[RMDB]
Structure probing data (2A3 and DMS) for a 177-nucleotide construct.
The reactions ran in a buffer of 150 mM KOAc, 10 mM MgCl2 and 150 mM bicine (pH 8.5), at 24 C.
For 2A3, 5,746 sequencing reads were counted.
For DMS the reverse transcriptase was MarathonRT.
Source: RMDB library TTRDES, as collected in RNAgym.
For DMS, 2,979 sequencing reads were counted.

RNA sequence: GGGAACGACUCGAGUAGAGUCGAAAAGAUAUGGAUUCGUCCGUAAAGAGCUAUGAAGACUCAUCGGAAACGAUGAGUUGGAGCUCUGCGGAGCGAAUCCUAAGUCAAACUCGCGUUCGCGCGAGAACGCUAAAGCAAUGUUCGCAUUGCUUUAGCGAAAAGAAACAACAACAACAAC
Reactivity to 2A3 in 0.01 (KOAc 150mM, MgCl2 10mM, bicine 150mM(pH8.5), 24C), signal-to-noise 3, nucleotides 027 to 126: g060a020u120a010u190g010g010a010u020u010c000g030u000c030c000g010u140a250a300a050g020a010g010c020u050a160u300g040a050a010g010a010c000u000c010a010u000c020g070g010a070a060a050c020g010a000u000g000a000g000u000u000g000g010a000g020c000u000c000u000g000c000g000g030a160g150c000g000a010a000u000c000c000u020a070a000g020u010c040a040a080a160c010u000c010g000c010g000u090u110c300g000c030g000c020g140a010g010a020a040
Reactivity to DMS in 0.01 (KOAc 150mM, MgCl2 10mM, bicine 150mM(pH8.5), 24C), signal-to-noise 3, nucleotides 027 to 126: g010a110u000a300u000g000g000a000u010u000c010g030u010c000c000g010u000a070a100a050g010a010g030c000u000a210u000g020a200a120g000a010c000u010c010a000u000c000g010g020a150a100a130c000g000a010u000g000a010g000u010u010g010g000a010g030c000u000c010u000g000c010g010g000a030g030c020g000a010a010u000c010c000u010a000a100g010u000c030a110a100a240c020u000c000g010c000g000u000u010c240g020c010g000c000g010a010g010a050a120